Record summary: This 177-nucleotide RNA was probed chemically with DMS and 2A3. The RNA was probed in 150 mM KOAc, 10 mM MgCl2 and 150 mM bicine (pH 8.5) at 24 C. For DMS, 6,922 sequencing reads were counted.
[RMDB]
RNA sequence: GGGAACGACUCGAGUAGAGUCGAAAAGCCAAUGAAGAACCUAGCCUUAGGUGUAAUCAACACAUUGGAGUGGAUACCGAGAUUCAAGGUUAGUCCCAACCUCUUCACUGUUCCAAUCAAGGAAGCAUGGAAGCAGUAUUUUCGAAUACUGCUUCCAAAAAGAAACAACAACAACAAC
Reactivity to DMS in 0.01 (KOAc 150mM, MgCl2 10mM, bicine 150mM(pH8.5), 24C), signal-to-noise 4, nucleotides 027 to 126: g010c040c000a050a040u020g010a100a060g000a050a040c040c000u000a020g020c100c110u020u000a050g030g000u020g010u000a170a110u010c160a110a110c120a170c040a100u010u040g000g000a050g030u010g010g000a040u030a030c050c040g010a110g010a110u020u010c130a080a050g010g000u010u010a080g020u020c040c010c010a140a040c080c040u020c040u000u000c010a020c070u000g000u020u000c020c020a060a110u030c140a100a080g000g010a030a060g030c170a110
Reactivity to 2A3 in 0.01 (KOAc 150mM, MgCl2 10mM, bicine 150mM(pH8.5), 24C), signal-to-noise 5, nucleotides 027 to 126: g050c030c000a020a010u100g010a050a080g030a040a010c010c010u040a020g120c010c050u080u070a060g010g010u020g030u140a070a150u130c060a060a060c050a000c000a070u020u220g110g010a080g070u110g000g050a030u030a080c010c020g030a030g000a080u090u180c090a040a020g000g010u020u020a000g080u080c010c000c000a000a050c040c020u030c010u030u020c010a060c090u010g050u060u010c020c020a000a080u140c020a070a140g050g000a000a030g060c070a060
2A3 adducts were read by reverse transcription with SuperScript II with manganese. DMS adducts were read by reverse transcription with MarathonRT.